[RMDB]
RNA sequence: GGGAACGACUCGAGUAGAGUCGAAAAUUGGCGAAUGCCUGUGGAUCUACAUUUGUUGCGGGUUCGAGACCCGUCAGAGCCCGGCUCUGUAGCUCAAUGGUAGAGCGGUGUAUCCACAUAAACUUGUAAAAGACACGUGCCUUCGGGCACGUGUCAAGUAACACCCAAUGUUCGCAUUGGGUGUUACAAAAGAAACAACAACAACAAC
Reactivity to 2A3 in 0.01 (KOAc 150mM, MgCl2 10mM, bicine 150mM(pH8.5), 24C), signal-to-noise 1, nucleotides 027 to 156: u060u040g010g000c010g060a300a020u300g000c010c010u010g000u010g000g010a030u000c020u070a020c020a060u050u070u090g070u020u020g000c000g030g000g000u000u000c000g000a020g010a010c000c000c000g000u000c000a030g000a000g020c140c220c170g090g030c000u000c000u020g020u020a000g000c000u000c000a030a040u220g300g080u170a030g010a000g000c000g000g000u010g000u000a020u010c000c010a000c000a010u100a020a100a010c060u080u080g010u060a000a080a080a000g020a000c020a000c000g010u000g040c000c000u040u040c250g000g000g020c000a000c000g000u000g030u000c000a010a000
Reactivity to DMS in 0.01 (KOAc 150mM, MgCl2 10mM, bicine 150mM(pH8.5), 24C), signal-to-noise 1, nucleotides 027 to 156: u010u010g020g010c010g030a130a060u010g060c060c030u000g000u000g000g030a000u060c090u000a010c020a020u000u000u000g000u000u000g010c040g010g010g000u010u000c070g010a300g000a040c010c010c010g090u000c040a070g010a060g000c000c250c090g040g000c010u000c010u000g030u010a100g020c010u010c050a070a070u000g000g010u000a030g010a050g110c020g020g030u010g000u000a100u000c010c010a040c000a090u000a020a130a090c060u000u000g000u000a080a130a050a160g000a090c010a010c000g040u000g010c000c000u000u010c300g000g050g050c000a020c040g010u000g020u000c000a000a040